[RMDB]
RNA sequence: GGGAACGACUCGAGUAGAGUCGAAAAGGAUCCUAAGUACUCUGGGUAACUGCCACGAGAUCAGUUACCAGUGAGGAGUACUCUAUUUGUCAAAGAUCUCGUGGUUGACGGAUAGAGAUUAGGAUCGCUACUGCUUAGUAUUCGUACUAAGCAGUAGAAAAGAAACAACAACAACAAC
Reactivity to DMS in 0.01 (KOAc 150mM, MgCl2 10mM, bicine 150mM(pH8.5), 24C), signal-to-noise 8, nucleotides 027 to 126: g000g010a020u000c000c000u000a010a050g010u000a090c000u000c000u000g010g010g010u010a080a080c020u000g000c070c020a050c060g010a040g000a040u000c010a070g010u000u000a050c050c070a070g010u010g010a070g000g010a190g010u010a230c010u000c010u000a030u000u010u000g010u000c050a060a110a100g000a050u000c030u010c040g010u000g000g020u000u000g010a050c090g010g000a200u010a010g000a020g010a180u000u000a000g010g010a010u000c000g000
Reactivity to 2A3 in 0.01 (KOAc 150mM, MgCl2 10mM, bicine 150mM(pH8.5), 24C), signal-to-noise 5, nucleotides 027 to 126: g030g010a000u000c000c000u020a020a000g040u040a100c000u010c010u050g030g030g030u050a040a030c020u010g000c000c010a040c040g050a030g000a020u050c000a010g040u040u040a010c000c010a010g020u030g050a030g020g040a050g060u070a050c000u000c000u020a040u000u030u040g020u000c030a020a010a050g020a030u000c000u000c010g020u020g040g010u010u030g020a030c040g020g010a010u050a060g010a010g010a010u000u020a000g000g000a000u000c000g000